This 177-nucleotide RNA was probed chemically with 2A3 and DMS. The data come from the RNA Mapping Database (RMDB), library OK2TST. The DMS profile rests on 920 reads. High 2A3 reactivity points to a flexible backbone, as in loops and unpaired stretches. Conditions: 150 mM KOAc, 10 mM MgCl2 and 150 mM bicine (pH 8.5), 24 C.
[RMDB]
RNA sequence: GGGAACGACUCGAGUAGAGUCGAAAACUUAUGAAAGGAGCGCUUAGGAAUGCUGAUCAAAUUGUUGCUGUAUCAUAUGCAACUUCAUCAGCAAUUUCUUCGGUAUUCCCUCAGUAUACUUCAAAGACGACUACCGAGUAUUCGUACUCGGUAGUCGAAAAGAAACAACAACAACAAC
Reactivity to 2A3 in 0.01 (KOAc 150mM, MgCl2 10mM, bicine 150mM(pH8.5), 24C), signal-to-noise 1, nucleotides 027 to 126: c020u140u050a030u210g090a130a050a030g000g000a050g050c050g030c050u000u000a010g020g000a010a000u020g000c030u030g010a030u050c050a030a030a080u070u070g020u030u000g000c010u000g090u170a080u140c090a030u120a060u300g100c020a020a000c000u080u000c000a020u000c000a010g020c000a010a090u010u010u020c020u000u000c000g000g000u010a020u020u070c040c040c020u000c000a010g020u020a040u070a160c010u020u060c080a000a090a040g060a030
Reactivity to DMS in 0.01 (KOAc 150mM, MgCl2 10mM, bicine 150mM(pH8.5), 24C), signal-to-noise 1, nucleotides 027 to 126: c010u000u000a080u010g010a060a140a120g010g000a060g020c190g000c060u020u010a040g000g010a000a010u000g020c000u000g000a010u010c080a030a040a060u020u000g010u000u000g020c040u020g010u000a080u010c250a170u000a060u030g010c110a000a020c110u000u000c160a010u000c000a010g020c010a030a050u000u000u000c030u000u000c020g030g000u010a060u010u000c020c000c040u000c110a110g100u010a060u000a080c100u000u000c030a040a140a110g000a220